Structure probing data (DMS) for a 177-nucleotide construct.
[RMDB]
RNA sequence: GGGAACGACUCGAGUAGAGUCGAAAAAGCGAACCACCCUGGCCUUUUGGUGAGGCCGGGUGACGACAGAAAAGCUACCCCAGGGAUAACAGAGUUGUCCCCGGCGAGAGUACAUAUCGACCCGGGGUUUUUUGCGCAGUUUCGACUGCGCAAAAAAAAAAGAAACAACAACAACAAC
Reactivity to DMS in 0.01 (KOAc 150mM, MgCl2 10mM, bicine 150mM(pH8.5), 24C), signal-to-noise 1, nucleotides 027 to 126: a080g020c040g020a120a050c060c000a000c000c000c000u000g200g000c050c000u000u000u020u150g060g000u050g070a000g000g000c000c000g030g000g000u000g000a000c020g000a010c300a240g010a130a010a080a200g000c110u000a120c040c000c000c020a200g000g000g000a060u010a010a080c240a010g000a210g000u000u000g000u000c000c000c040c020g000g000c070g000a260g000a120g000u020a120c300a260u060a080u080c000g010a300c300c010c000g010g010g000g010
Overview:
Conditions: 150 mM KOAc, 10 mM MgCl2 and 150 mM bicine (pH 8.5), 24 C. Values are in units of 0.01, from 0 to 300, in steps of 10.